[RMDB]
RNA sequence: GGGAACGACUCGAGUAGAGUCGAAAACUUCGUUAAACAUAAUCCAAUGACUGCCUGUUAUUUUGUUACUGACGAUCGUCGCGGACCACAUUUCAUAUCACCUAAGUCUGAAAAAGCUGACGAAUUGCAUAUGUACGUUAUUCGUAACGUACAUAUGAAAAGAAACAACAACAACAAC
Reactivity to DMS in 0.01 (KOAc 150mM, MgCl2 10mM, bicine 150mM(pH8.5), 24C), signal-to-noise 9, nucleotides 027 to 126: c070u000u000c050g020u010u000a040a080a110c070a050u000a070a080u010c090c070a070a080u000g010a060c050u000g010c050c040u000g010u000u000a060u000u000u000u000g020u000u000a070c110u000g010a080c060g010a060u000c060g020u000c040g020c060g000g010a080c050c050a060c100a070u000u000u000c040a030u000a060u000c040a090c050c030u010a070a110g010u000c030u010g000a050a080a070a100a110g020c090u000g010a040c050g000a060a110u000u010g010
Reactivity to 2A3 in 0.01 (KOAc 150mM, MgCl2 10mM, bicine 150mM(pH8.5), 24C), signal-to-noise 9, nucleotides 027 to 126: c010u100u080c030g050u050u130a090a110a030c030a070u130a120a060u070c040c050a070a110u090g040a050c020u050g060c020c020u060g050u120u040a110u040u140u060u060g090u060u080a090c050u060g040a030c040g040a060u060c040g030u020c020g000c020g040g020a020c010c010a030c020a030u030u090u050c050a050u070a030u090c020a050c030c020u040a100a040g030u000c020u020g090a070a070a040a050a020g100c080u070g020a020c020g050a110a110u140u110g010